[RMDB]
RNA sequence: GGGAACGACUCGAGUAGAGUCGAAAAAGAGGAUGACAGCGUGGUCGAUAACUUGAAGGGUUACGCUGCAGGAGAUUUACCGACUGUGGAAAUAAAGUCGGAGGAGGUAGAUAAAACCACGCUCGUGCAUAGCAGCGGUAUUCGUACCGCUGCUAUGAAAAGAAACAACAACAACAAC
Reactivity to DMS in 0.01 (KOAc 150mM, MgCl2 10mM, bicine 150mM(pH8.5), 24C), signal-to-noise 5, nucleotides 027 to 126: a060g010a100g010g020a090u010g010a120c070a020g010c010g050u000g010g000u010c040g010a180u000a050a060c070u010u010g010a120a130g010g000g010u000u000a040c120g010c030u000g000c040a050g010g010a130g000a120u010u010u010a150c040c030g000a040c000u000g010u010g010g010a070a090a120u010a070a070a060g010u000c000g010g000a080g000g000a070g010g000u000a020g010a080u000a080a090a130a040c030c020a020c020g010c020u000c140g010u000g000
Reactivity to 2A3 in 0.01 (KOAc 150mM, MgCl2 10mM, bicine 150mM(pH8.5), 24C), signal-to-noise 3, nucleotides 027 to 126: a010g080a060g100g020a070u110g030a060c010a010g020c020g020u010g010g000u030c020g030a200u050a080a030c040u030u130g150a120a040g100g010g000u040u010a020c030g030c040u020g000c010a010g070g050a120g000a030u070u100u160a090c020c010g020a000c020u050g010u110g210g100a120a080a070u230a060a220a000g010u020c030g020g010a010g040g020a040g000g060u040a030g010a100u100a090a060a020a010c000c010a010c000g000c000u040c020g050u050g030